Chemical mapping of a 170-nucleotide RNA with DMS and 2A3.
For DMS, 68,204 sequencing reads were counted.
DMS adducts were read by reverse transcription with MarathonRT.
Conditions: 150 mM KOAc, 10 mM MgCl2 and 150 mM bicine (pH 8.5), 24 C.
The 2A3 profile rests on 50,698 reads.
RNA sequence: GGGAACGACUCGAGUAGAGUCGAAAAGAUGGGUUACGUGGCGCAAUACGUAAAGCUAAAGAUUAUGGUUUUACUGUUUUUGUGUGCACAGACAACUCUGCUAACACUAAAGUUCUUAGGAACAAGGUAAGUAACUACUUCGGUAGUUACAAAAGAAACAACAACAACAAC
Reactivity to DMS in 0.01 (KOAc 150mM, MgCl2 10mM, bicine 150mM(pH8.5), 24C), signal-to-noise 9, nucleotides 027 to 129: g000a040u040g010g010g030u010u020a060c180g020u010g010g020c020g000c010a030a010u020a020c000g000u000a000a020a000g000c000u030a040a150a180g000a160u070u060a100u060g020g020u010u010u010u000a000c000u040g040u000u000u000u000u000g030u000g000u020g030c000a020c000a090g030a110c180a020a010c000u020c000u000g010c080u040a120a110c160a080c030u060a030a150a110g000u020u010c020u020u100a100g020g010a040a030c030a000a140g000g000u000a050a090
Reactivity to 2A3 in 0.01 (KOAc 150mM, MgCl2 10mM, bicine 150mM(pH8.5), 24C), signal-to-noise 9, nucleotides 027 to 129: g070a050u170g000g020g000u030u030a050c050g000u010g020g010c000g000c000a000a010u020a020c010g000u010a000a000a000g000c020u080a100a170a070g170a180u220u200a170u300g020g010u010u010u000u000a040c090u070g090u090u110u020u080u030g030u010g010u090g180c010a010c000a000g050a040c070a030a010c010u010c010u030g050c050u120a130a020c040a020c120u110a100a070a060g010u020u020c010u050u120a110g080g050a040a030c030a050a010g060g010u060a040a080